[RMDB]
Conditions: 150 mM KOAc, 10 mM MgCl2 and 150 mM bicine (pH 8.5), 24 C. The record gives the reactivity of an RNA of 177 nucleotides to 2A3 and DMS. For 2A3, 2,172 sequencing reads were counted.
RNA sequence: GGGAACGACUCGAGUAGAGUCGAAAAUCGUCGAGCUUCGGCUCGACGAAAAACGCUAACUGUAAAGCGAAGGGUGGAGCGAACGCCGCCUAACGACCGCUCAAAGAGACCCCUUCGGGGGUCUCAACAUUAUCAUACCGUUCGCGGUAUGAUAAUGAAAAGAAACAACAACAACAAC
Reactivity to 2A3 in 0.01 (KOAc 150mM, MgCl2 10mM, bicine 150mM(pH8.5), 24C), signal-to-noise 1, nucleotides 027 to 126: u000c010g030u010c010g010a020g030c000u000u170c230g090g000c000u010c000g000a000c000g000a000a000a000a000a000c000g010c000u020a040a030c040u090g110u240a120a060a070g030c020g020a060a030g060g000g020u050g030g010a020g020c020g020a060a010c040g000c010c020g000c010c000u020a030a010c030g030a020c010c030g030c030u040c050a050a080a010g020a000g000a000c000c010c020c000u020u060c060g020g000g050g000g010u000c010u000c010a000a010
Reactivity to DMS in 0.01 (KOAc 150mM, MgCl2 10mM, bicine 150mM(pH8.5), 24C), signal-to-noise 3, nucleotides 027 to 126: u000c000g030u010c010g000a040g020c010u000u010c200g040g010c000u010c000g020a010c000g000a000a030a050a050a090c040g010c040u000a060a120c130u000g000u000a070a090a070g030c000g000a090a220g000g000g020u010g010g000a070g000c020g000a040a070c050g010c010c010g000c020c020u000a050a110c060g000a090c080c030g020c090u000c090a090a100a210g000a030g000a020c000c000c000c000u000u010c100g010g000g000g030g000u000c010u000c000a020a130

2A3 adducts were read by reverse transcription with SuperScript II with manganese.